[RMDB]
RNA sequence: GGGAACGACUCGAGUAGAGUCGAAAAGGAGAUCGAAGAGGACCGACGUCAGCACGGUCAGGAUGUAGGUCCGCAUGCAUCCGAGUUGACGAAACUUUACGAUUUCCAAAGCGGACAAGAAGUCAAAAUGACUAUCCACGUUCGCGUGGAUAGUCAUAAAAGAAACAACAACAACAAC
Reactivity to DMS in 0.01 (KOAc 150mM, MgCl2 10mM, bicine 150mM(pH8.5), 24C), signal-to-noise 2, nucleotides 027 to 126: g000g000a000g000a000u010c000g040a260a120g030a020g010g050a100c210c150g000a180c020g000u010c100a020g000c110a170c160g010g000u000c090a050g000g030a000u000g030u000a020g020g030u000c000c000g010c050a030u010g000c000a040u000c000c000g020a040g010u000u000g000a060c100g020a140a050a110c000u000u000u000a150c020g000a000u000u000u000c000c000a030a120a150g000c010g000g000a000c010a210a110g000a140a090g000u000c070a030a110a110
Reactivity to 2A3 in 0.01 (KOAc 150mM, MgCl2 10mM, bicine 150mM(pH8.5), 24C), signal-to-noise 2, nucleotides 027 to 126: g000g000a010g000a010u030c030g010a040a130g070a120g230g050a030c000c050g030a050c000g050u170c030a040g000c080a040c080g000g020u020c040a050g010g000a000u010g000u030a010g000g000u010c020c000g000c000a000u000g000c020a000u000c000c000g030a030g010u030u040g030a070c140g080a080a050a000c000u010u000u110a060c030g000a000u020u000u000c000c000a040a100a000g000c010g000g000a000c000a060a050g140a140a020g040u140c090a050a090a010
Conditions: 150 mM KOAc, 10 mM MgCl2 and 150 mM bicine (pH 8.5), 24 C. This 177-nucleotide RNA was probed chemically with DMS and 2A3. DMS adducts were read by reverse transcription with MarathonRT. The data come from the RNA Mapping Database (RMDB), library OK1LIB. 2A3 adducts were read by reverse transcription with SuperScript II with manganese. The DMS profile rests on 2,122 reads.